[RMDB]
RNA sequence: GGGAACGACUCGAGUAGAGUCGAAAAUGCUGUCGUUGACAGCGCCCAACGCUUCACAAUCUGAAAGAAGCGCCUGUUAUCAGGACGGUUGAUCCAUUUACCGGUGCAGACCUCUGCAAACACCGGGUUUAACAAGCAUCUUUCGAGAUGCUUGUAACAAGUCUAAUUGGUUCGCCAAUUAGACUUGAAAAGAAACAACAACAACAAC
Reactivity to DMS in 0.01 (KOAc 150mM, MgCl2 10mM, bicine 150mM(pH8.5), 24C), signal-to-noise 3, nucleotides 027 to 156: u010g050c010u010g010u000c010g020u000u000g010a030c000a020g010c000g020c120c040c000a090a110c020g020c000u000u000c020a200c090a100a110u000c100u010g010a110a240a180g010a040a020g020c020g020c000c070u000g020u000u000a090u000c070a060g020g010a080c100g020g010u000u000g030a190u010c070c040a260u000u000u000a150c000c000g010g040u000g020c010a140g020a190c180c110u000c100u000g020c040a180a160a060c010a010c010c000g000g010g020u000u000u010a060a030c000a010a010g010c000a010u000c000u000u000u000c230g020a030g000a020u000g010c000u000u010g010u000a030a190
Reactivity to 2A3 in 0.01 (KOAc 150mM, MgCl2 10mM, bicine 150mM(pH8.5), 24C), signal-to-noise 5, nucleotides 027 to 156: u170g000c000u000g030u020c060g300u090u300g010a000c000a000g020c010g020c010c000c000a040a050c020g010c000u010u010c020a020c020a150a150u020c030u070g030a080a050a030g010a010a010g000c000g040c010c000u140g060u190u180a130u300c010a010g010g000a000c030g010g010u020u040g020a080u060c030c030a040u080u070u080a070c000c000g000g000u010g000c010a010g090a260c010c110u210c050u110g020c070a080a200a040c050a010c000c010g010g000g040u030u110u060a020a010c000a000a000g000c000a000u020c010u030u100u100c170g050a020g000a010u010g000c000u000u000g000u010a000a010